[RMDB]
This 177-nucleotide RNA was probed chemically with DMS and 2A3. Reactivities are rounded to 0.1 and cut off at 0 and 3. The RNA was probed in 150 mM KOAc, 10 mM MgCl2 and 150 mM bicine (pH 8.5) at 24 C. The data come from the RNA Mapping Database (RMDB), library OK1LIB. The DMS profile rests on 21,984 reads. For DMS the reverse transcriptase was MarathonRT.
RNA sequence: GGGAACGACUCGAGUAGAGUCGAAAAGAAGGAGAUGAAAGCGACUUUAGAAUCGGCUAACUGAGCAGCCAGAUACAGACGGCAAGUAUCGUCGCCAGAGAUACAGUCGCAACUAGCCGUAGGAGAAGCCAUUUAAAUAGUUCGCUAUUUAAAUGGCAAAAGAAACAACAACAACAAC
Reactivity to DMS in 0.01 (KOAc 150mM, MgCl2 10mM, bicine 150mM(pH8.5), 24C), signal-to-noise 8, nucleotides 027 to 126: g010a070a060g010g000a070g000a080u020g010a040a120a100g000c030g000a050c020u000u020u000a070g010a130a100u010c040g000g010c020u020a070a180c080u020g010a100g020c040a100g000c050c050a090g010a080u020a080c120a100g000a100c080g000g000c010a100a090g010u000a020u010c020g010u020c190g000c040c050a060g000a070g000a100u010a040c120a060g000u000c010g000c030a070a080c120u000a080g010c030c010g000u010a070g010g000a110g020a100a100
Reactivity to 2A3 in 0.01 (KOAc 150mM, MgCl2 10mM, bicine 150mM(pH8.5), 24C), signal-to-noise 9, nucleotides 027 to 126: g090a040a020g070g040a080g010a060u140g090a080a090a020g000c000g010a010c000u090u100u070a090g050a150a090u070c040g010g000c020u040a080a050c060u090g050a020g030c030a010g020c020c030a020g000a040u120a050c040a020g090a030c030g010g000c020a090a050g030u040a090u100c050g030u020c040g050c040c010a030g020a000g000a040u060a070c040a010g010u010c000g000c020a010a000c000u030a010g020c010c010g030u060a050g010g170a110g030a110a000